[RMDB]
Structure probing data (2A3 and DMS) for a 207-nucleotide construct. For DMS, 2,136 sequencing reads were counted. The reactions ran in a buffer of 150 mM KOAc, 10 mM MgCl2 and 150 mM bicine (pH 8.5), at 24 C. For DMS the reverse transcriptase was MarathonRT.

RNA sequence: GGGAACGACUCGAGUAGAGUCGAAAACCAGCUUGCCUGUGUCCUAGGGAAUUGGAAGGUCAUCCUUCACAGGAUCGUGUGGAAGUCCUGCUCGGGGCGGAAUCAUUAAAACCAUUCGAGCUAGUCAAAAACCGGCUGAUCUUCGGAUCAGCCGGAAUCCGUACAUAAAGUUCGCUUUAUGUACGGAAAAAGAAACAACAACAACAAC
Reactivity to 2A3 in 0.01 (KOAc 150mM, MgCl2 10mM, bicine 150mM(pH8.5), 24C), signal-to-noise 2, nucleotides 027 to 156: c000c000a000g040c020u040u190g040c010c020u010g000u000g020u120c010c110u110a100g000g090g060a210a160u140u210g060g040a040a030g050g000u110c040a110u130c010c020u020u050c020a020c000a030g050g030a110u060c030g020u050g000u030g060g020a040a030g030u030c000c010u010g020c020u020c040g010g000g000g000c020g040g000a050a010u150c010a020u020u190a040a020a010a070c050c000a040u110u060c000g000a000g030c030u070a020g120u120c130a030a020a010a150a180c000c000g000g040c020u030g000a000u000c000u040u070c210g020g020a000u000c000a000g090c000c000g000g000a000a000
Reactivity to DMS in 0.01 (KOAc 150mM, MgCl2 10mM, bicine 150mM(pH8.5), 24C), signal-to-noise 1, nucleotides 027 to 156: c000c010a140g000c060u010u010g010c070c010u000g020u000g000u000c040c050u000a120g050g020g030a080a140u000u100g000g020a130a000g060g000u010c110a200u020c030c000u000u010c110a110c040a080g010g000a130u010c090g050u020g070u000g030g030a150a120g030u020c010c010u020g000c070u000c010g020g010g010g050c050g040g010a120a130u000c120a090u010u000a060a110a160a200c030c000a140u000u010c040g010a060g020c020u000a150g010u040c100a080a060a100a100a110c010c010g030g000c020u000g010a010u010c000u000u010c300g060g000a050u010c000a040g020c000c000g000g020a010a000